[RMDB]
RNA sequence: GGGAACGACUCGAGUAGAGUCGAAAAUUGAACGGAUUCGUCCGUUCAACGCGUGCGAUCCAAACGUAGUACAAAAGUACAGACGAAAGCACAACGAUCAAAUGAUACAGCCGUUCGCGGCUGUAAAAUCGUAAAAUGGAUUCGUCCAUUUUACGAUAAAAGAAACAACAACAACAAC
Reactivity to 2A3 in 0.01 (KOAc 150mM, MgCl2 10mM, bicine 150mM(pH8.5), 24C), signal-to-noise 9, nucleotides 027 to 126: u020u010g000a010a000c000g000g020a010u040u050c150g060u020c040c000g000u000u000c000a000a000c020g050c030g020u010g010c020g010a040u050c050c010a030a040a050c040g040u040a030g010u010a030c030a030a300a050a060g020u010a010c010a050g140a050c020g040a110a030a020g010c020a010c010a030a080c040g050a050u140c090a050a080a100u160g060a020u020a080c000a000g000c020c010g010u040u100c210g010c000g110g000c000u000g000u010a000a000a000
Reactivity to DMS in 0.01 (KOAc 150mM, MgCl2 10mM, bicine 150mM(pH8.5), 24C), signal-to-noise 9, nucleotides 027 to 126: u000u000g000a000a000c000g020g010a030u000u010c230g020u000c000c000g020u000u000c010a010a010c150g010c160g010u000g010c020g000a170u000c050c060a070a100a210c080g010u000a070g010u000a030c020a080a080a080a120g010u000a010c000a080g010a140c100g000a060a060a200g010c020a010c020a100a110c190g010a100u000c120a070a060a100u010g010a250u000a010c000a000g000c010c000g020u000u010c200g010c000g010g010c010u000g000u000a000a020a100
The record gives the reactivity of an RNA of 177 nucleotides to 2A3 and DMS. The DMS profile rests on 12,416 reads.